[RMDB]
An RNA of 207 nucleotides, treated with DMS and 2A3 and read out base by base.
RNA sequence: GGGAACGACUCGAGUAGAGUCGAAAAGGCCCCACGCAAUGGAAACCUGUGAACCUCGUCAGGUCCGGAAGGAAGCAGCGAUAAGCAGUCAUUUUCAUGUGCCGUGGAUACGUCUGGCUUGAGCUAACUGCAUAGGUAACGUUCAUAAGUUAUUGUCCGUUGAAAAAAUGUUCGCAUUUUUUCAACGAAAAGAAACAACAACAACAAC
Reactivity to DMS in 0.01 (KOAc 150mM, MgCl2 10mM, bicine 150mM(pH8.5), 24C), signal-to-noise 2, nucleotides 027 to 156: g010g010c000c090c000c020a010c050g000c070a100a050u010g030g000a030a090a080c120c000u030g010u010g020a180a110c230c100u000c040g010u000c030a300g040g010u000c000c030g030g040a240a100g000g030a100a060g010c050a230g030c030g000a100u000a100a300g000c020a030g010u050c120a170u000u000u010u030c000a020u000g020u000g040c000c070g030u000g000g000a100u000a070c060g010u010c000u000g000g000c090u000u000g000a100g010c060u000a070a050c010u000g030c080a180u010a070g040g000u010a040a070c060g010u000u000c000a090u000a030a240g000u000u000a010u000u010g020u000c060
Reactivity to 2A3 in 0.01 (KOAc 150mM, MgCl2 10mM, bicine 150mM(pH8.5), 24C), signal-to-noise 2, nucleotides 027 to 156: g040g010c000c040c000c000a000c000g000c000a010a000u000g000g020a020a020a010c050c000u020g020u040g040a060a050c010c100u030c020g080u090c020a000g020g000u000c000c010g120g080a090a050g010g010a010a020g020c020a010g010c010g010a010u010a050a020g000c010a000g020u040c050a050u000u030u020u010c000a010u070g060u060g300c120c010g000u010g000g010a030u050a090c070g020u000c020u020g040g070c000u050u110g010a020g010c030u060a050a080c030u060g030c070a120u170a200g040g000u040a080a030c040g040u030u030c050a080u090a280a060g050u010u060a110u070u140g050u010c030
The reactions ran in a buffer of 150 mM KOAc, 10 mM MgCl2 and 150 mM bicine (pH 8.5), at 24 C. 2A3 adducts were read by reverse transcription with SuperScript II with manganese. DMS adducts were read by reverse transcription with MarathonRT. For 2A3, 1,960 sequencing reads were counted.